[RMDB]
RNA sequence: GGGAACGACUCGAGUAGAGUCGAAAACGGGACCCCCUCCUAAAAGACCGAGGGGGGGUGCUUGGAGCACGGGGGUCCCAGUGGAUCCGUGGGAUGCUCCUCCCGAUUCCGAUAUCCCUUCCCCCGAACACUCCUAACUUCGGUUAGGAGAAAAGAAACAACAACAACAAC
Reactivity to 2A3 in 0.01 (KOAc 150mM, MgCl2 10mM, bicine 150mM(pH8.5), 24C), signal-to-noise 9, nucleotides 027 to 129: c000g000g000g020a010c000c000c010c010c000u020c000c010u130a150a150a080a070g140a090c110c100g050a090g000g010g010g000g000g010g010u020g010c040u080u260g050g030a040g010c020a010c020g050g000g000g010g020u000c000c000c020a040g050u160g060g030a040u030c050c060g230u120g020g040g000a070u070g090c000u000c000c000u020c000c000c000g000a020u110u030c030c020g020a030u040a120u180c000c000c030u010u030c000c000c000c000c000g010a060a010c050a020
Reactivity to DMS in 0.01 (KOAc 150mM, MgCl2 10mM, bicine 150mM(pH8.5), 24C), signal-to-noise 9, nucleotides 027 to 129: c000g000g010g010a130c000c000c000c000c000u010c000c020u060a060a080a120a090g020a130c210c190g030a040g050g020g050g010g020g000g040u010g020c080u020u060g050g020a030g000c000a020c000g020g010g010g010g010u020c000c000c100a100g040u060g010g010a040u030c050c040g030u040g020g020g000a140u020g030c020u020c010c010u010c020c020c020g040a070u000u070c040c060g000a040u020a110u060c030c010c050u000u000c000c000c030c000c090g000a120a090c230a130
Background
An RNA of 170 nucleotides, treated with 2A3 and DMS and read out base by base. The data come from the RNA Mapping Database (RMDB), library 15KLIB. 2A3 adducts were read by reverse transcription with SuperScript II with manganese. The RNA was probed in 150 mM KOAc, 10 mM MgCl2 and 150 mM bicine (pH 8.5) at 24 C.